[RMDB]
RNA sequence: GGGAACGACUCGAGUAGAGUCGAAAAGUUCCAGGAGAAGCGGGCCGAGGACCCAGGGUCAACUCGUUAACGAUCCUUGGAAACCUAUAAGUGCCGAGAACACUCGCACUGACUUCGCUCUCGCUGCCUGAUCAGUGAUCGAAGGGUCAGCCCGGAUAGAUAUAUAAUACUUCGGUAUUAUAUAUCUAAAAGAAACAACAACAACAAC
Reactivity to DMS in 0.01 (KOAc 150mM, MgCl2 10mM, bicine 150mM(pH8.5), 24C), signal-to-noise 2, nucleotides 027 to 156: g010u000u000c020c030a180g000g000a170g000a070a080g010c010g030g030g040c070c020g000a080g000g000a150c080c030c050a090g040g040g020u000c060a120a140c140u010c140g010u000u010a110a150c110g010a020u000c000c000u010u000g000g010a130a130a110c030c030u030a070u000a030a020g020u010g020c020c030g020a200g000a070a060c080a040c020u010c020g010c030a030c010u010g000a060c020u000u010c040g010c020u010c050u000c020g010c010u000g000c010c050u000g000a000u020c030a020g020u000g000a060u000c020g020a130a070g000g020g030u000c030a040g010c010c000c020g020g020a300u000
Reactivity to 2A3 in 0.01 (KOAc 150mM, MgCl2 10mM, bicine 150mM(pH8.5), 24C), signal-to-noise 1, nucleotides 027 to 156: g020u060u040c000c000a030g070g100a290g020a150a050g140c020g020g000g000c050c020g050a020g010g000a200c010c000c000a000g000g000g000u000c010a000a020c080u110c230g120u130u080a000a000c040g000a010u040c000c000u010u020g010g000a130a150a140c020c000u040a050u020a290a030g000u010g150c250c020g030a000g010a080a010c220a100c090u000c000g000c010a000c010u040g050a070c010u030u010c020g000c000u020c000u000c000g000c010u020g010c000c090u160g010a190u230c010a010g000u010g020a050u300c020g000a000a020g010g000g050u060c030a020g000c000c020c000g010g010a020u020

Description: This 207-nucleotide RNA was probed chemically with DMS and 2A3. Conditions: 150 mM KOAc, 10 mM MgCl2 and 150 mM bicine (pH 8.5), 24 C. The DMS profile rests on 3,055 reads. 2A3 adducts were read by reverse transcription with SuperScript II with manganese. DMS adducts were read by reverse transcription with MarathonRT.